Annotation
Structure probing data (DMS) for a 177-nucleotide construct. Reactivities are given for positions 27 through 126. The reactions ran in a buffer of 150 mM KOAc, 10 mM MgCl2 and 150 mM bicine (pH 8.5), at 24 C.
RNA sequence: GGGAACGACUCGAGUAGAGUCGAAAAGUUUUUAACGCGUCUGCACCCGCUAACACGAAUUACCCAGUUAUUUUCGACUUUACUCGAGUCGUUAUAGCGUGAGUUGGCGGAGUUCUCCGCGAAAUAACAGGCUAACUAUAUUCGUAUAGUUAGCCUGAAAAGAAACAACAACAACAAC
Reactivity to DMS in 0.01 (KOAc 150mM, MgCl2 10mM, bicine 150mM(pH8.5), 24C), signal-to-noise 3, nucleotides 027 to 126: g010u000u000u000u000u010a070a070c080g020c020g010u000c120u000g000c030a080c060c050c050g020c050u000a050a070c130a050c090g000a080a060u000u000a100c030c010c030a100g000u000u010a090u000u000u000u000c000g010a010c000u000u000u000a000c000u000c010g000a010g000u000c000g010u000u000a010u010a060g010c060g000u020g010a070g010u000u000g000g010c020g000g000a060g000u000u010c080u000c000c010g030c030g010a060a050a050u000a070a180